RNA sequence: GGGAACGACUCGAGUAGAGUCGAAAAUUAAUUGUACAUAUUAUGGGGUACAAUUCAGUGUUCUGAUACAUGUAUACAUUGCAUAAUGAUCAAAUCAGGGCAGUUAGCAUAUCUGUCACCUCAUGCAUUUAUUAUUUCUUUGUGGUGAGAACAUUCAGUCCACUAUGAUAUUCGUAUCAUAGUGGACAAAAGAAACAACAACAACAAC
Reactivity to 2A3 in 0.01 (KOAc 150mM, MgCl2 10mM, bicine 150mM(pH8.5), 24C), signal-to-noise 5, nucleotides 027 to 156: u050u040a000a040u030u010g020u040a010c010a020u180a070u180u250a100u240g060g000g000g000u010a010c040a000a010u030u100c070a040g040u000g020u050u010c010u020g030a030u020a090c070a040u040g040u090a060u050a110c080a060u060u040g110c020a020u040a190a090u090g030a020u070c060a010a130a060u030c010a010g000g010g010c010a010g060u020u090a020g070c080a060u070a070u140c050u050g050u020c020a050c050c010u040c030a010u030g030c010a000u020u020u140a080u130u080a060u020u130u020c060u040u050u080g030u010g050g000u070g040a050g020a060a040c010a030u130u220c110a050
Reactivity to DMS in 0.01 (KOAc 150mM, MgCl2 10mM, bicine 150mM(pH8.5), 24C), signal-to-noise 3, nucleotides 027 to 156: u000u000a050a050u020u000g010u010a080c010a300u000a150u000u000a110u010g010g030g050g050u010a040c000a010a070u000u000c080a110g010u000g030u010u000c020u010g000a100u000a130c100a080u010g010u010a090u000a090c060a090u000u010g020c080a060u010a100a060u010g020a130u010c100a070a110a240u000c000a080g000g010g030c030a050g030u010u000a130g050c120a110u000a050u000c070u000g020u000c050a090c020c030u000c030a110u010g010c030a100u000u000u000a020u010u000a040u020u000u000c000u000u000u000g040u000g010g020u010g000a060g000a080a100c130a160u000u000c040a120
Source information
Chemical mapping of a 207-nucleotide RNA with 2A3 and DMS. High DMS reactivity at an A or C suggests that its Watson-Crick edge is free. The RNA was probed in 150 mM KOAc, 10 mM MgCl2 and 150 mM bicine (pH 8.5) at 24 C. It was measured as part of the RMDB library OK3TST. 2A3 adducts were read by reverse transcription with SuperScript II with manganese.